[RMDB]
RNA sequence: GGGAACGACUCGAGUAGAGUCGAAAAUGAGAACUCUAAUCCAUUCUCUGAGCGAGAAGGAUGGCCGAAGCGGGUUCGCAUUUGAGGCAUUAAGGUAGACGACAGAGUUCUUCUGGAAACUACUGCCCGGUAUCGAAGCUUUCGAGCUUCGAUACCGAAAAGAAACAACAACAACAAC
Reactivity to DMS in 0.01 (KOAc 150mM, MgCl2 10mM, bicine 150mM(pH8.5), 24C), signal-to-noise 2, nucleotides 027 to 126: u000g000a100g000a000a020c010u000c060u110a200a000u000c000c000a060u000u000c010u000c030u010g040a150g020c250g000a010g000a040a090g020g020a000u030g010g000c200c140g050a300a020g000c250g010g000g000u000u010c050g000c020a000u000u050u050g000a190g020g000c040a200u010u010a150a110g000g000u030a040g010a070c070g020a300c010a000g020a010g050u000u010c070u010u000c000u000g010g000a180a210a100c040u000a020c000u020g000c030c000
Reactivity to 2A3 in 0.01 (KOAc 150mM, MgCl2 10mM, bicine 150mM(pH8.5), 24C), signal-to-noise 3, nucleotides 027 to 126: u030g000a000g000a040a000c000u010c050u060a050a050u000c000c020a230u030u000c000u000c020u040g160a090g140c150g040a030g020a070a000g010g020a020u020g020g000c060c040g070a130a010g130c060g030g000g000u000u000c000g010c010a010u010u010u090g080a070g000g020c030a070u060u300a070a010g020g040u010a010g030a080c060g030a010c010a010g020a060g060u220u100c000u060u000c000u010g000g000a060a120a040c000u000a020c000u060g050c010c000